[RMDB]
This 177-nucleotide RNA was probed chemically with 2A3 and DMS. For DMS the reverse transcriptase was MarathonRT. The RNA was probed in 150 mM KOAc, 10 mM MgCl2 and 150 mM bicine (pH 8.5) at 24 C.
RNA sequence: GGGAACGACUCGAGUAGAGUCGAAAAAAGGGCCUUUCCUUGUUGAUCCCUUAAUUAUUAAACCGAGCUCGCACUGGUCUUUCCACACCCCGAUGUCCAACUCAGUGGAGCAGUUCCGGACAUCAUAGCAAGAUUAAUUGUUCGCAAUUAAUCUUGCAAAAGAAACAACAACAACAAC
Reactivity to 2A3 in 0.01 (KOAc 150mM, MgCl2 10mM, bicine 150mM(pH8.5), 24C), signal-to-noise 2, nucleotides 027 to 126: a000a000g010g000g010c000c090u020u110u120c030c010u030u070g160u120u180g070a110u080c000c000c000u000u030a120a110u090u150a080u020u150a060a030a030c040c010g010a030g040c000u000c030g000c030a040c050u050g060g000u000c040u000u060u040c020c030a110c040a040c010c020c000c040g000a000u010g000u030c000c000a020a000c030u000c060a090g100u190g190g120a030g080c070a000g020u150u000c060c030g020g010a010c010a000u030c000a020u040a030
Reactivity to DMS in 0.01 (KOAc 150mM, MgCl2 10mM, bicine 150mM(pH8.5), 24C), signal-to-noise 3, nucleotides 027 to 126: a040a030g010g010g020c300c090u000u010u000c010c010u020u000g000u000u000g000a130u000c010c000c010u000u010a080a110u000u010a100u000u010a060a070a160c080c040g010a180g000c040u000c030g010c130a060c070u010g010g000u010c050u000u000u000c010c040a110c170a150c070c020c030c080g020a010u010g000u000c010c000a050a040c030u010c020a200g010u000g010g010a060g010c140a050g010u000u000c120c090g000g000a040c010a010u000c000a080u000a120